RNA sequence: GGGAACGACUCGAGUAGAGUCGAAAAGGUCUCUGUUUCGCUAACCCUAAUACACUGGCUUCAGGGCGAUGGCUCUUCGCGGCGGUGCCUGUUGUUUUACUUGCUGACUUUCAGCGGGCACGGAGAGCAAGCGUAGACGACGACUAAAAAACGUCAGCUGUGUAUGUGUGUUCGCACACAUACACAGAAAAGAAACAACAACAACAAC
Reactivity to DMS in 0.01 (KOAc 150mM, MgCl2 10mM, bicine 150mM(pH8.5), 24C), signal-to-noise 1, nucleotides 027 to 156: g000g010u000c020u000c020u030g010u000u000u000c010g030c020u000a140a110c020c000c000u000a040a140u010a070c050a120c020u000g000g000c060u010u000c060a110g010g040g020c060g010a080u000g000g000c030u000c000u000u000c060g030c040g010g020c060g020g060u000g000c010c010u000g040u000u000g000u000u000u000u000a040c060u000u000g010c030u000g000a070c040u000u000u010c030a060g020c000g010g000g000c010a020c000g050g010a090g000a090g030c000a010a060g000c010g020u010a080g000a300c060g000a080c070g010a120c040u010a000a010a040a070a020a060c110g000u000c020a180g020
Reactivity to 2A3 in 0.01 (KOAc 150mM, MgCl2 10mM, bicine 150mM(pH8.5), 24C), signal-to-noise 3, nucleotides 027 to 156: g070g000u010c010u000c030u070g060u040u080u060c040g020c050u090a220a230c020c000c030u060a100a040u170a120c110a040c100u100g050g010c040u100u140c060a040g010g040g000c040g060a070u070g040g000c030u010c010u040u060c030g000c060g200g000c070g100g010u020g010c000c010u000g010u000u000g020u020u060u000u030a050c060u040u090g010c010u010g030a010c010u010u040u010c000a000g000c010g000g000g030c020a000c000g000g050a090g000a010g010c040a040a010g020c010g030u060a050g010a020c030g000a000c030g020a020c100u190a050a010a000a000a000a010c100g000u000c000a000g010
The record gives the reactivity of an RNA of 207 nucleotides to DMS and 2A3. 2A3 adducts were read by reverse transcription with SuperScript II with manganese. For 2A3, 1,953 sequencing reads were counted. The DMS profile rests on 2,600 reads.